Record summary: The record gives the reactivity of an RNA of 177 nucleotides to DMS and 2A3.
[RMDB]
RNA sequence: GGGAACGACUCGAGUAGAGUCGAAAACUACGUACGUGCCGCCGGCGACGGUCACGAGGGCGCAGCUCAUGGCUGCCGUUGAGGCGCUCGGCAUCGACCCUAACGAGGUUAGCUGCCUCGUAAUCGACAGGUAGCUGCAGUUCGCUGCAGCUACCUGAAAAGAAACAACAACAACAAC
Reactivity to DMS in 0.01 (KOAc 150mM, MgCl2 10mM, bicine 150mM(pH8.5), 24C), signal-to-noise 1, nucleotides 027 to 126: c060u000a060c090g010u000a010c030g030u010g000c210c050g010c000c000g000g030c000g030a110c050g030g000u000c010a040c160g050a040g000g030g030c160g000c150a100g000c010u000c030a140u000g030g000c010u000g000c000c030g010u000u000g000a160g000g000c020g010c020u000c030g030g000c080a060u000c090g000a250c030c010c040u000a060a120c010g000a010g000g010u000u010a170g000c160u030g030c000c000u000c050g000u000a000a060u030c070g020a220
Reactivity to 2A3 in 0.01 (KOAc 150mM, MgCl2 10mM, bicine 150mM(pH8.5), 24C), signal-to-noise 1, nucleotides 027 to 126: c000u110a010c030g030u060a030c000g040u040g150c120c070g000c000c000g010g000c010g000a000c000g000g070u050c040a010c090g020a080g010g090g000c130g000c090a030g010c010u030c020a000u070g030g000c020u010g000c010c000g000u030u150g210a210g060g000c010g010c020u020c050g020g000c020a050u110c070g070a090c020c020c020u010a000a040c000g000a000g010g040u030u020a030g000c100u060g020c050c000u020c000g020u010a080a160u120c060g010a040

Reactivities are given for positions 27 through 126. The RNA was probed in 150 mM KOAc, 10 mM MgCl2 and 150 mM bicine (pH 8.5) at 24 C. Values are in units of 0.01, from 0 to 300, in steps of 10.